Conditions: 150 mM KOAc, 10 mM MgCl2 and 150 mM bicine (pH 8.5), 24 C. This 207-nucleotide RNA was probed chemically with 2A3. It was measured as part of the RMDB library M2RFPK. For 2A3 the reverse transcriptase was SuperScript II with manganese.
[RMDB]
RNA sequence: GGGAACGACUCGAGUAGAGUCGAAAAGAUAAGCUAGCAGCAAAAAGGAACCGAUUCCCACCAAGUUCGGAAAGAGCUACCGGGCGAGGCGCUGAAGAAAGAAUCUCGCUUCAGACACCCCAAGGACAUGACCUUAAAAUGUUCGCAUUUUAAGGAACUUCCGUCAAUACUUCGGUAUUGACGGAAGAAAAGAAACAACAACAACAAC
Reactivity to 2A3 in 0.01 (KOAc 150mM, MgCl2 10mM, bicine 150mM(pH8.5), 24C), signal-to-noise 2, nucleotides 027 to 156: g040a070u080a060a030g050c080u100a000g010c040a010g020c030a010a000a000a180a000g060g010a050a020c030c010g040a080u090u030c030c000c000a000c020c020a100a020g000u100u060c030g000g040a210a110a040g090a040g020c000u030a040c120c090g010g010g000c060g020a060g010g010c120g000c030u020g010a030a020g030a010a240a000g010a060a090u060c100u030c140g000c000u010u010c010a050g080a080c040a040c040c060c000c050a020a050g000g000a040c040a140u170g050a040c000c000u000u000a000a030a000a000u010g010u020u110c110g000c130a000u000u000u000u000a000a000g000g000a000a010